[RMDB]
RNA sequence: GGGAACGACUCGAGUAGAGUCGAAAAGUGUCGGCAUCUGUUAAUUCCUUUUGGAAUUUAGAGCCAUUGAAGGUGAAAGCCCUGUUCGCGGGUGUCGACAUCUAGACCAUGCCCUUAGCUCCACGAGAAAUCUCAGUAUGUUCGCAUACUGAGAUUUAAAAGAAACAACAACAACAAC
Reactivity to 2A3 in 0.01 (KOAc 150mM, MgCl2 10mM, bicine 150mM(pH8.5), 24C), signal-to-noise 7, nucleotides 027 to 126: g010u000g000u000c000g000g010c000a020u000c010u000g030u050u060a020a010u030u050c010c000u080u230u140u300g010g000a010a010u020u040u080a100g010a020g030c020c000a020u090u180g060a070a020g010g000u040g030a070a030a030g040c010c010c010u040g050u060u040c050g000c010g000g010g000u000g010u000c000g010a000c000a000u010c020u040a030g030a060c000c030a040u080g020c010c010c000u010u050a020g010c030u010c060c020a090c090g050a050g070
Reactivity to DMS in 0.01 (KOAc 150mM, MgCl2 10mM, bicine 150mM(pH8.5), 24C), signal-to-noise 5, nucleotides 027 to 126: g010u000g000u000c020g000g000c010a010u000c000u000g000u010u010a050a020u000u000c000c010u010u020u020u030g000g010a020a020u000u000u010a050g020a080g040c020c220a130u030u010g020a100a060g000g010u010g000a120a100a150g010c030c010c020u000g000u010u010c060g000c020g000g000g010u000g000u000c000g010a020c010a010u010c030u010a070g000a180c060c040a110u010g000c020c010c010u000u000a070g010c040u000c020c030a090c120g000a130g000